[RMDB]
RNA sequence: GGGAACGACUCGAGUAGAGUCGAAAAGACGGAAAAGAUCGAACCUAAGAAGAUCAGGCAGUGUGAGCCGAAUCCUAGGGCUCCUAGGGACGCAUCGUCGGAUGCGAAAUAAACACUAACGUCGAAAACCUAAAUGCGAGUUCGCUCGCAUUUAGGUAAAAGAAACAACAACAACAAC
Reactivity to DMS in 0.01 (KOAc 150mM, MgCl2 10mM, bicine 150mM(pH8.5), 24C), signal-to-noise 3, nucleotides 027 to 126: g010a020c010g010g000a070a020a050a060g000a050u010c060g010a060a170c100c170u020a100a100g000a180a140g000a060u010c000a090g010g030c090a130g000u030g000u000g000a050g050c040c040g010a100a060u000c020c010u000a050g020g000g000c110u000c020c100u010a030g010g000g010a300c000g000c020a000u000c000g040u060c280g030g000a040u000g020c010g000a000a110a060u020a070a080a040c020a040c020u000a050a100c030g020u030c000g000a080a090a120
Reactivity to 2A3 in 0.01 (KOAc 150mM, MgCl2 10mM, bicine 150mM(pH8.5), 24C), signal-to-noise 4, nucleotides 027 to 126: g030a010c010g050g080a090a090a050a050g060a020u090c020g010a110a070c010c040u060a130a010g090a020a000g000a100u070c030a040g020g020c030a020g030u010g010u050g110a030g000c010c050g030a050a030u000c000c000u030a030g050g040g130c090u060c030c000u030a010g010g000g000a010c010g000c000a000u000c010g290u060c080g180g010a000u000g000c000g000a000a010a120u160a010a060a000c010a020c040u100a110a020c040g000u030c000g030a060a030a020
The data come from the RNA Mapping Database (RMDB), library OK1LIB. Structure probing data (DMS and 2A3) for a 177-nucleotide construct. Conditions: 150 mM KOAc, 10 mM MgCl2 and 150 mM bicine (pH 8.5), 24 C.